[RMDB]
RNA sequence: GGGAACGACUCGAGUAGAGUCGAAAAGAGUGAGGGAGGCAGCGUCUCGGGGUCGGGGAGGGUGUCUGGGGAGGGCGCUCUGGGGAGGGCGGUCUAGGACGCUGGCGAGUCGGGACGGGAGGGAAAAGGGAUAUGAAUACUUCGGUAUUCAUAUCCCAAAAGAAACAACAACAACAAC
Reactivity to 2A3 in 0.01 (KOAc 150mM, MgCl2 10mM, bicine 150mM(pH8.5), 24C), signal-to-noise 1, nucleotides 027 to 126: g100a000g030u050g030a040g010g040g010a060g000g110c010a000g010c040g000u010c020u060c060g030g000g040g010u110c080g030g000g040g010a060g050g060g040u030g150u050c240u120g020g000g000g010a110g050g090g000c030g000c050u010c000u090g000g000g000g080a230g010g000g020c030g000g000u020c020u060a000g070g000a000c000g000c020u050g020g010c060g000a000g030u130c030g050g010g010a120c020g010g000g030a300g060g000g040a000a040a000a040
Conditions: 150 mM KOAc, 10 mM MgCl2 and 150 mM bicine (pH 8.5), 24 C. This 177-nucleotide RNA was probed chemically with 2A3. Reactivities are given for positions 27 through 126. It was measured as part of the RMDB library OK1LIB.